Chemical mapping of a 177-nucleotide RNA with DMS and 2A3. For 2A3, 4,130 sequencing reads were counted. As a SHAPE reagent, 2A3 marks flexible, mostly unpaired nucleotides at the ribose 2'-OH. For DMS, 10,480 sequencing reads were counted. Conditions: 150 mM KOAc, 10 mM MgCl2 and 150 mM bicine (pH 8.5), 24 C. 2A3 adducts were read by reverse transcription with SuperScript II with manganese. Source: RMDB library OK2TRN, as collected in RNAgym.

[RMDB]
RNA sequence: GGGAACGACUCGAGUAGAGUCGAAAAGGAAAUGCAAGCUCUGGAAAUUCGUUAAUGUAUUUGAUGUCUUAGUGUUUUAGUGACUAGGGAGACCAUUAACUAGUUUAUCAUUAACCACUUAUCAGUGAGACAUAUCAUCUUUCGAGAUGAUAUGUCUAAAAGAAACAACAACAACAAC
Reactivity to DMS in 0.01 (KOAc 150mM, MgCl2 10mM, bicine 150mM(pH8.5), 24C), signal-to-noise 8, nucleotides 027 to 126: g000g000a060a060a060u000g020c080a060a070g010c050u000c040u000g010g000a050a050a080u000u000c100g010u010u000a040a040u000g000u000a120u000u010u010g020a110u020g010u010c030u000u000a050g020u000g010u020u000u010u010a090g020u010g010a030c000u010a100g000g010g010a070g010a140c180c040a030u000u000a080a080c040u000a040g010u000u000u000a080u010c040a040u000u000a050a110c260c030a040c080u010u010a100u000c110a050g010u000g010
Reactivity to 2A3 in 0.01 (KOAc 150mM, MgCl2 10mM, bicine 150mM(pH8.5), 24C), signal-to-noise 4, nucleotides 027 to 126: g040g020a020a040a020u080g020c030a020a060g000c020u040c020u080g050g040a060a080a060u070u030c020g000u010u080a060a020u070g080u100a110u060u110u110g080a040u090g050u030c020u040u040a040g000u030g140u040u120u000u100a120g040u090g040a020c010u010a000g060g070g000a040g030a020c010c020a020u040u020a040a000c020u010a030g000u010u080u080a110u060c020a020u040u060a050a040c020c000a030c070u120u090a130u200c030a020g060u030g130